[RMDB]
RNA sequence: GGGAACGACUCGAGUAGAGUCGAAAAGACCGAUUAAUUGCGGUCCGAGUGAAAUACGUAUUGUGAUCCAUACUCAAGAAUCGGACGGACUAGCGAAAUAAAUAAGGUUUCGGUCAUGUAUGGAUAACUACGAGCACUAUUUCGAUAGUGCUCGUAGAAAAGAAACAACAACAACAAC
Reactivity to DMS in 0.01 (KOAc 150mM, MgCl2 10mM, bicine 150mM(pH8.5), 24C), signal-to-noise 2, nucleotides 027 to 126: g000a030c000c020g020a010u000u000a050a150u000u000g010c040g000g010u000c010c010g000a190g000u000g010a050a110a110u010a150c080g020u000a100u000u000g010u020g010a070u000c000c010a020u000a010c000u020c090a250a140g010a150a060u000c030g000g010a180c040g020g000a050c040u000a100g040c010g010a040a100a150u000a020a050a050u040a120a190g010g030u000u000u010c000g010g010u000c010a090u010g000u000a000u000g020g000a050u000a030a190
Reactivity to 2A3 in 0.01 (KOAc 150mM, MgCl2 10mM, bicine 150mM(pH8.5), 24C), signal-to-noise 2, nucleotides 027 to 126: g020a000c020c000g010a020u030u230a150a100u130u270g000c000g000g010u000c000c020g050a040g160u220g110a000a160a000u260a080c040g060u110a070u070u300g180u040g040a040u000c000c000a010u000a010c000u040c080a040a000g070a090a120u090c020g010g030a000c000g010g010a000c040u090a110g120c080g050a020a050a090u160a020a120a090u160a050a050g180g040u000u020u080c020g020g000u000c010a020u030g000u000a000u010g020g000a010u010a070a010

An RNA of 177 nucleotides, treated with DMS and 2A3 and read out base by base.
The data come from the RNA Mapping Database (RMDB), library OK2TST.
The DMS profile rests on 1,302 reads.
The reactions ran in a buffer of 150 mM KOAc, 10 mM MgCl2 and 150 mM bicine (pH 8.5), at 24 C.